[RMDB]
RNA sequence: GGGAACGACUCGAGUAGAGUCGAAAACUGGAUCCGAAGCCUCUAGAAGGAUAAUAUAGGCACUCCAUACCCUACUCCGACUCAAUACGUCCCCGUCGUACAGAUUGGUAACAUAUCUCUCCAAAUAAAAACGUUGUCUCGUUCGCGAGACAACGAAGCUACGGUAGAUCUUCGGAUCUACCGUAGCAAAAGAAACAACAACAACAAC
Reactivity to 2A3 in 0.01 (KOAc 150mM, MgCl2 10mM, bicine 150mM(pH8.5), 24C), signal-to-noise 1, nucleotides 027 to 156: c040u030g000g020a010u170c000c000g000a110a010g010c000c060u100c170u210a070g050a170a060g130g020a060u150a100a090u100a080u090a120g000g000c060a060c100u020c010c000a020u060a120c010c010c000u000a020c040u000c010c000g040a010c040u060c060a160a000u080a120c010g030u040c000c040c000c010g120u080c020g000u020a000c010a010g030a060u020u040g030g000u040a040a000c020a070u130a150u010c050u000c010u000c080c020a020a060a030u130a060a120a040a020a020c000g000u000u000g010u000c000u000c000g040u060u040c120g030c010g100a000g000a000c000a000a000c000g000a000a010